[RMDB]
RNA sequence: GGGAACGACUCGAGUAGAGUCGAAAAGCUAAUUAGCAUGCUAAUGCGCCGAUGCUAUACGUACGGCAUCGGCAUGCUAAUAUCGUAAUUAAUGCGCAUCGGCUAGCGCGCAUUACGCGUAUAGCGCAGAGUCAUUCGACUUCGGUCGAAUGACUCUAAAAGAAACAACAACAACAAC
Reactivity to DMS in 0.01 (KOAc 150mM, MgCl2 10mM, bicine 150mM(pH8.5), 24C), signal-to-noise 1, nucleotides 027 to 126: g000c040u000a030a110u000u000a000g000c010a020u000g050c020u000a050a070u000g020c000g010c070c000g020a040u000g010c020u000a280u040a120c300g010u000a050c190g050g010c010a000u000c010g000g000c020a020u000g020c000u020a000a020u000a080u020c100g030u010a080a080u030u030a010a030u000g000c010g000c000a050u010c300g030g000c070u000a030g040c040g000c000g000c170a110u010u000a030c100g000c020g000u000a080u000a000g000c010g020c140
Reactivity to 2A3 in 0.01 (KOAc 150mM, MgCl2 10mM, bicine 150mM(pH8.5), 24C), signal-to-noise 1, nucleotides 027 to 126: g070c030u080a030a050u010u010a000g030c010a000u000g000c000u070a150a000u080g010c000g000c000c020g020a020u050g000c040u070a030u040a290c140g180u030a040c140g040g000c000a000u000c010g000g000c000a000u000g000c010u000a000a030u010a040u120c040g080u020a000a120u120u100a040a010u090g040c030g000c000a040u030c010g110g010c000u060a000g050c010g000c000g010c090a050u050u110a070c060g010c030g000u040a120u010a300g000c050g000c070
The record gives the reactivity of an RNA of 177 nucleotides to DMS and 2A3. DMS adducts were read by reverse transcription with MarathonRT. It was measured as part of the RMDB library OK2TRN. Reactivities are given for positions 27 through 126.